[RMDB]
RNA sequence: GGGAACGACUCGAGUAGAGUCGAAAAGCUAAUAACUCGGAAUGGCUGCGUUCUCUCCGAGGUGAGAAUAACACGAAAUGUCACUUUCCCGCCACUUGCAGCCGGGGCCGUCUGUUCUUCCUGCGACCAUCGACUAGGAGUUCGCUCCUAGUCGAUGAAAAGAAACAACAACAACAAC
Reactivity to DMS in 0.01 (KOAc 150mM, MgCl2 10mM, bicine 150mM(pH8.5), 24C), signal-to-noise 2, nucleotides 027 to 126: g000c060u020a090a070u040a100a090c040u020c020g000g020a080a130u000g010g000c000u010g000c030g020u020u020c060u010c040u040c000c020g000a050g000g000u020g000a040g030a070a090u010a130a160c070a110c110g030a050a050a110u000g000u000c020a050c040u000u020u030c000c020c010g010c060c070a040c060u000u010g000c060a070g030c020c010g000g000g000g070c050c040g000u000c000u000g000u030u000c060u000u000c010c030u000g000c060g010a150c140
Reactivity to 2A3 in 0.01 (KOAc 150mM, MgCl2 10mM, bicine 150mM(pH8.5), 24C), signal-to-noise 5, nucleotides 027 to 126: g040c040u060a090a030u130a280a120c020u030c070g020g050a080a120u100g120g030c030u010g000c040g080u160u030c050u000c000u020c030c030g020a020g030g030u050g010a080g050a080a170u220a180a030c050a020c120g070a050a090a090u200g030u060c010a000c050u040u030u050c030c010c000g030c000c010a060c060u030u140g010c000a010g000c020c000g000g010g020g000c020c010g020u010c050u050g040u050u010c000u060u030c010c020u020g030c010g050a050c010
An RNA of 177 nucleotides, treated with DMS and 2A3 and read out base by base.
For 2A3 the reverse transcriptase was SuperScript II with manganese.
The 2A3 profile rests on 3,133 reads.
For DMS the reverse transcriptase was MarathonRT.
It was measured as part of the RMDB library OK1LIB.
Values cover nucleotides 27 to 126.
Conditions: 150 mM KOAc, 10 mM MgCl2 and 150 mM bicine (pH 8.5), 24 C.